[RMDB]
RNA sequence: GGGAACGACUCGAGUAGAGUCGAAAAGAGUUGGGCCGCUCUCCUGAUGAACCCAUGGCAGGGUGAAACCAGUGUGGUACGGUAUGGCAAGGCUUGCCUCGGAGUCAAGCGGGAGGCCUCCCGGGGCGCCGCAUGGGCGCAGUGCUGCGCGAGACUCGCGUAAUUAUGAGUUCGCUCAUAAUUACGCAAAAGAAACAACAACAACAAC
Reactivity to DMS in 0.01 (KOAc 150mM, MgCl2 10mM, bicine 150mM(pH8.5), 24C), signal-to-noise 1, nucleotides 027 to 156: g000a040g050u010u000g000g000g040c010c000g040c000u020c010u020c010c040u020g030a180u010g020a150a090c050c010c030a090u000g010g040c120a030g010g040g030u000g000a080a170a110c030c010a130g000u010g010u000g040g020u000a030c060g030g000u000a080u000g000g010c050a070a190g000g000c070u000u000g020c000c010u000c030g020g000a130g050u000c030a030a160g020c080g000g000g000a170g020g030c080c010u000c020c010c020g010g000g040g040c030g020c020c040g070c110a070u000g020g020g020c030g050c040a160g010u010g000c060u000g000c020g000c070g010a190g020a080c060u000c080
Reactivity to 2A3 in 0.01 (KOAc 150mM, MgCl2 10mM, bicine 150mM(pH8.5), 24C), signal-to-noise 2, nucleotides 027 to 156: g030a000g000u070u060g010g030g010c020c000g010c010u020c000u050c000c000u080g050a110u060g030a070a040c030c010c020a050u070g060g000c060a030g040g020g030u040g030a070a040a020c030c020a040g040u050g000u040g150g060u100a040c050g030g050u130a090u110g040g000c100a100a040g070g000c040u060u160g000c030c010u030c040g040g020a050g010u060c070a100a040g020c050g020g050g030a020g050g020c020c000u040c020c030c000g040g010g020g030c010g010c010c050g010c030a090u130g050g050g000c060g000c050a010g030u040g070c050u020g010c040g000c010g020a050g020a030c050u030c080

The record gives the reactivity of an RNA of 207 nucleotides to DMS and 2A3. For DMS the reverse transcriptase was MarathonRT. For 2A3 the reverse transcriptase was SuperScript II with manganese. The DMS profile rests on 2,585 reads. Reactivities are given for positions 27 through 156. The RNA was probed in 150 mM KOAc, 10 mM MgCl2 and 150 mM bicine (pH 8.5) at 24 C.